Structure probing data (2A3 and DMS) for a 207-nucleotide construct. For DMS, 3,074 sequencing reads were counted. Source: RMDB library OK3TST, as collected in RNAgym.

RNA sequence: GGGAACGACUCGAGUAGAGUCGAAAAGGAGAUCUCUCGAUCUCGGCUCUUCUGCACAACUCAACUAAUCUGACCCUCCUCAGCUAAUCUGACCCUCCGCUUUAUGCGGUAGAGUUUUCCAGAGCUGCCCCAGGGGGUUCUGGGGACAUCAGGACCAUAACAUUUCUUACUUCGGUAAGAAAUGUUAAAAAGAAACAACAACAACAAC
Reactivity to 2A3 in 0.01 (KOAc 150mM, MgCl2 10mM, bicine 150mM(pH8.5), 24C), signal-to-noise 2, nucleotides 027 to 156: g080g020a030g000a040u010c150u030c020u060c190g020a030u030c010u000c070g040g020c020u010c010u080u150c050u130g040c020a030c040a100a120c050u080c100a040a070c090u160a120a130u150c080u090g060a040c000c000c010u030c000c000u030c010a010g000c000u040a040a100u170c020u010g020a030c000c010c000u000c000c000g040c020u060u130u070a170u300g020c000g000g010u050a030g030a030g000u060u080u080u060c060c010a000g000a000g060c060u070g060c020c020c000c010a010g010g010g000g060g000u070u020c000u000g000g010g000g030a000c010a060u120c020a020g040g040a040c010c050a020
Reactivity to DMS in 0.01 (KOAc 150mM, MgCl2 10mM, bicine 150mM(pH8.5), 24C), signal-to-noise 2, nucleotides 027 to 156: g050g000a060g000a060u000c020u010c110u010c090g000a050u000c030u000c020g020g020c020u010c020u000u000c020u000g060c060a180c080a080a100c060u000c030a050a130c090u010a070a100u010c050u010g010a260c010c010c010u000c020c020u000c020a070g020c060u000a060a080u010c020u010g000a060c040c020c010u000c000c010g030c010u000u010u000a090u040g020c010g010g010u010a010g010a070g010u000u000u010u000c050c010a120g010a120g020c040u010g010c020c020c010c060a100g010g010g000g000g030u000u000c020u010g000g030g040g000a090c040a060u020c040a060g030g000a060c020c020a300
2A3 adducts were read by reverse transcription with SuperScript II with manganese. For DMS the reverse transcriptase was MarathonRT. Values are in units of 0.01, from 0 to 300, in steps of 10. Conditions: 150 mM KOAc, 10 mM MgCl2 and 150 mM bicine (pH 8.5), 24 C. Reactivities are given for positions 27 through 156.